[RMDB]
RNA sequence: GGGAACGACUCGAGUAGAGUCGAAAAGAUAUGGACCAUGAUGAACUACGCUAUUCUUCGGAAACGAAUUAGAGCGCAUCCGCUGGUCCUAAGUCAAAAUCACGCAUCGCUUCGGCGAUGCGUGAAAGAACUAAGUUCCGUUCGCGGAACUUAGUUCAAAAGAAACAACAACAACAAC
Reactivity to DMS in 0.01 (KOAc 150mM, MgCl2 10mM, bicine 150mM(pH8.5), 24C), signal-to-noise 1, nucleotides 027 to 126: g000a070u000a300u000g000g000a020c000c000a000u000g020a100u010g030a070a060c180u000a290c010g020c000u000a040u000u000c090u010u000c000g000g010a100a090a130c000g040a020a010u000u000a020g010a020g010c000g050c000a010u000c000c010g010c020u000g000g050u000c000c010u010a000a040g000u020c030a090a060a170a220u010c000a000c000g000c000a000u010c000g000c000u010u000c210g020g020c050g030a000u000g000c030g010u010g000a020a030a050
Reactivity to 2A3 in 0.01 (KOAc 150mM, MgCl2 10mM, bicine 150mM(pH8.5), 24C), signal-to-noise 1, nucleotides 027 to 126: g010a010u050a030u090g000g000a000c010c010a010u110g010a010u020g000a110a110c140u170a100c300g000c000u000a000u110u000c010u010u000c010g050g050a080a060a040c010g040a020a020u010u010a020g000a000g050c050g010c020a010u010c000c020g010c000u020g000g000u050c010c000u010a020a020g050u000c000a050a000a050a220u050c030a020c040g000c000a010u030c000g060c060u080u080c280g080g000c050g090a010u000g000c000g000u020g000a000a000a010